Chemical mapping of a 177-nucleotide RNA with 2A3 and DMS. Values cover nucleotides 27 to 126. DMS adducts were read by reverse transcription with MarathonRT. 2A3 is a SHAPE reagent: it acylates the 2'-hydroxyl of flexible nucleotides of all four kinds. For 2A3, 1,975 sequencing reads were counted. For 2A3 the reverse transcriptase was SuperScript II with manganese.
[RMDB]
RNA sequence: GGGAACGACUCGAGUAGAGUCGAAAAAUUCAUGUGCGUAGAUAGGAGUCAUGUAGCUACUGCAGUGUGUGCGCGCCCUCCGUAACCUACACACAGUUUGUACAUGGCCGGUAGAUAGCAGGAGGUCCGUCUAUAGUGGGUUCGCCCACUAUAGACGAAAAGAAACAACAACAACAAC
Reactivity to 2A3 in 0.01 (KOAc 150mM, MgCl2 10mM, bicine 150mM(pH8.5), 24C), signal-to-noise 2, nucleotides 027 to 126: a000u120u110c100a060u090g010u000g020c010g060u050a010g030a130u070a040g050g090a080g040u030c040a040u110g020u050a070g070c050u030a030c030u040g090c120a170g030u010g000u010g040u040g090c010g010c010g040c010c030c000u090c000c000g030u020a060a070c010c020u050a000c000a000c000a000c000a020g030u040u120u120g040u050a010c020a020u030g050g000c010c020g000g000u040a080g020a120u080a050g050c040a000g000g070a010g040g030u020c030
Reactivity to DMS in 0.01 (KOAc 150mM, MgCl2 10mM, bicine 150mM(pH8.5), 24C), signal-to-noise 4, nucleotides 027 to 126: a140u020u010c040a090u010g020u000g010c030g010u000a050g010a140u010a100g010g010a100g020u000c050a060u000g010u000a050g010c050u000a050c060u000g000c100a110g020u010g010u010g010u000g000c040g020c090g010c060c060c020u000c030c000g010u000a060a100c140c050u000a030c030a020c030a100c030a050g010u010u020u000g040u000a030c060a040u000g010g000c020c040g000g000u000a050g000a100u000a060g010c030a070g000g010a080g000g010u000c050